[RMDB]
RNA sequence: GGGAACGACUCGAGUAGAGUCGAAAAUAUCGGAGAAUAAUUUCUUUCUCGCUGAUCGCCUAACUUCUACUGACGAAGCUUGGAAGUUGCAGAAGGGUCCUGGUGUCAUACUUCGGUAUGACACCAGCGAUAGAUAUCCUUUCGAGGAUAUCUAUCGAAAAGAAACAACAACAACAAC
Reactivity to 2A3 in 0.01 (KOAc 150mM, MgCl2 10mM, bicine 150mM(pH8.5), 24C), signal-to-noise 5, nucleotides 027 to 126: u150a030u050c040g050g040a040g030a080a030u110a110a090u140u300u080c040u010u050u010c020u000c020g140c150u170g010a030u030c050g050c020c010u010a020a030c000u010u000c010u030a040c020u020g100a060c090g140a140a040g050c030u040u010g030g000a010a010g000u020u030g040c040a040g040a190a050g100g040g020u050c010c010u010g020g020u010g000u010c000a000u000a010c000u010u040c180g070g000u010a000u000g000a000c000a000c000c000a000g000
Reactivity to DMS in 0.01 (KOAc 150mM, MgCl2 10mM, bicine 150mM(pH8.5), 24C), signal-to-noise 8, nucleotides 027 to 126: u010a050u000c030g010g000a040g010a030a020u010a060a110u010u010u010c150u010u000u000c010u000c020g000c060u010g010a020u000c180g000c020c020u010a020a040c020u000u000c010u000a200c080u010g010a120c170g000a110a050g010c180u010u000g010g010a030a040g010u000u000g010c110a090g000a070a100g010g010g010u000c100c000u000g000g010u000g000u000c000a010u000a000c000u000u010c190g020g010u000a000u000g000a000c000a000c000c000a010g010